[RMDB]
RNA sequence: GGGAACGACUCGAGUAGAGUCGAAAAAAAAGAUAUGGAUCCUGAACUACAUGGACCACGACCGAAGAACGAAUCUCGGAAACGAGAUUCGGGAGGUCGUUAGUACAUGCAGGAUCCUAAGUCAAAAGAUCCUAAAUUAGUUCGCUAAUUUAGGAUCAAAAGAAACAACAACAACAAC
Reactivity to 2A3 in 0.01 (KOAc 150mM, MgCl2 10mM, bicine 150mM(pH8.5), 24C), signal-to-noise 3, nucleotides 027 to 126: a000a000a000a000g030a010u030a010u050g010g000a000u000c010c000u010g000a030a020c070u220a030c300a000u020g000g020a000c010c000a010c020g000a000c010c000g260a300a010g000a040a000c010g000a000a010u000c000u010c020g000g010a020a010a000c010g000a010g010a010u010u000c000g000g000g000a010g000g000u000c000g000u000u000a010g010u010a020c000a000u010g020c000a010g010g010a000u010c000c000u000a000a000g010u020c000a040a010a050a160
Reactivity to DMS in 0.01 (KOAc 150mM, MgCl2 10mM, bicine 150mM(pH8.5), 24C), signal-to-noise 4, nucleotides 027 to 126: a070a060a110a120g000a010u000a070u000g000g000a000u000c000c000u010g000a060a030c070u020a300c000a000u010g010g000a050c040c110a010c010g000a020c000c000g000a110a160g000a100a230c050g000a030a000u000c000u000c010g000g000a010a010a040c000g010a020g000a010u000u000c000g010g000g000a000g040g020u000c000g020u000u000a030g010u000a030c010a010u000g000c000a010g010g000a000u000c000c000u000a000a040g000u000c010a100a070a130a150